The record gives the reactivity of an RNA of 177 nucleotides to 2A3 and DMS. Reactivities are given for positions 27 through 126.
RNA sequence: GGGAACGACUCGAGUAGAGUCGAAAAGAAAGAAAGAAAGAGUUCUUUUGAAGGAUAGCAGCAUAAGCCUGUCUCAAAAUAAUUCUGCAGUGAGACAGGUUCAUGCUGCUAUCGUUCCAAAGAGGAAUUUGUACGUACCUUUCGAGGUACGUACAAAAAAAGAAACAACAACAACAAC
Reactivity to 2A3 in 0.01 (KOAc 150mM, MgCl2 10mM, bicine 150mM(pH8.5), 24C), signal-to-noise 2, nucleotides 027 to 126: g080a000a060a000g040a060a030a000g100a020a020a000g130a000g030u070u070c010u000u000u000u000g000a010a000g060g000a000u000a000g000c030a020g000c010a000u000a000a000g000c030c000u000g000u000c000u000c000a100a160a020a030u290a100a160u180u140c130u140g160c080a140g140u000g060a000g000a000c000a000g000g000u010u000c000a000u000g010c000u030g000c010u010a000u000c000g000u000u000c000c010a000a000a000g000a000g090g070a090a120
Reactivity to DMS in 0.01 (KOAc 150mM, MgCl2 10mM, bicine 150mM(pH8.5), 24C), signal-to-noise 3, nucleotides 027 to 126: g000a050a070a090g000a100a080a060g000a100a040a110g000a150g000u030u000c000u000u000u000u000g000a050a010g020g010a010u000a000g000c010a000g000c000a000u000a050a030g000c000c000u010g000u010c020u000c010a050a060a100a060u070a100a150u020u010c230u020g010c220a130g010u020g000a010g000a000c000a010g000g030u000u000c050a000u000g010c010u000g010c000u000a000u000c020g000u000u000c010c070a010a010a010g000a050g010g020a080a130